The record gives the reactivity of an RNA of 177 nucleotides to 2A3 and DMS. The data come from the RNA Mapping Database (RMDB), library OK2TST. DMS adducts were read by reverse transcription with MarathonRT. High DMS reactivity at an A or C suggests that its Watson-Crick edge is free. The 2A3 profile rests on 1,369 reads. Reactivities are given for positions 27 through 126.

RNA sequence: GGGAACGACUCGAGUAGAGUCGAAAACAUUCGCGCCAAUGUGGGUCAUAUAGGCAGCAAAACCACAUAACAUCAUGAUCAUCAUGCCAAGAUCGCCACCACGGCUCAUCAGCAAGAUUUUGACGUACACCUAAAACCCAUUCGUGGGUUUUAGGUGAAAAGAAACAACAACAACAAC
Reactivity to 2A3 in 0.01 (KOAc 150mM, MgCl2 10mM, bicine 150mM(pH8.5), 24C), signal-to-noise 2, nucleotides 027 to 126: c020a000u080u080c060g010c020g000c070c010a050a040u100g030u080g020g060g050u070c030a000u060a030u060a190g060g000c020a050g010c050a060a020a040a040c000c000a050c050a100u140a110a020c000a050u100c030a020u090g030a050u070c000a010u030c020a000u070g060c000c020a050a020g020a050u100c040g000c030c000a060c050c000a020c060g030g020c030u020c030a090u010c010a020g060c040a100a020g060a130u020u020u110u140g040a020c000g060u030a020
Reactivity to DMS in 0.01 (KOAc 150mM, MgCl2 10mM, bicine 150mM(pH8.5), 24C), signal-to-noise 3, nucleotides 027 to 126: c100a100u020u010c040g010c080g030c030c080a090a090u040g030u010g000g000g000u000c100a030u000a090u010a150g010g010c040a070g020c100a050a020a060a200c060c040a040c060a050u000a080a150c070a080u000c080a010u000g020a030u010c040a060u010c110a060u000g000c010c040a070a060g000a050u010c080g020c020c000a090c050c040a110c110g010g020c020u000c050a040u010c080a060g020c040a050a090g000a080u000u000u000u000g010a090c090g020u000a170